[RMDB]
This 207-nucleotide RNA was probed chemically with 2A3. Source: RMDB library OK3TST, as collected in RNAgym. Conditions: 150 mM KOAc, 10 mM MgCl2 and 150 mM bicine (pH 8.5), 24 C. Reactivities are rounded to 0.1 and cut off at 0 and 3.
RNA sequence: GGGAACGACUCGAGUAGAGUCGAAAACUACACACACACACACACUAAGGAUUCAAGGGAGAACUCACUUUUUAAAGGUGCCUUUUUCUGAUCCAAGAAUAUCCAAAUCUGGAAAGGAAUCAGUUGCUUAUUGAUACUAAGCUCCUUAGAUAAGGGACAGUAGGUCGAGUUUCGACUCGACCUACUGAAAAGAAACAACAACAACAAC
Reactivity to 2A3 in 0.01 (KOAc 150mM, MgCl2 10mM, bicine 150mM(pH8.5), 24C), signal-to-noise 1, nucleotides 027 to 156: c010u160a020c000a040c030a040c000a000c000a000c000a010c130a000c010a040c000u010a070a020g110g000a040u160u140c080a070a010g050g040g000a060g070a190a100c000u080c010a060c040u010u070u080u030u300a110a170a050g020g010u040g000c020c000u020u110u000u080u020c010u010g010a010u010c000c000a040a000g050a110a050u180a040u070c040c000a120a060a060u020c060u010g000g000a070a040a020g060g000a040a000u040c010a020g030u070u120g050c010u080u110a040u040u150g030a050u010a300c030u010a050a000g030c010u080c040c020u030u030a050g010a130u070a030a060g020g000g060a010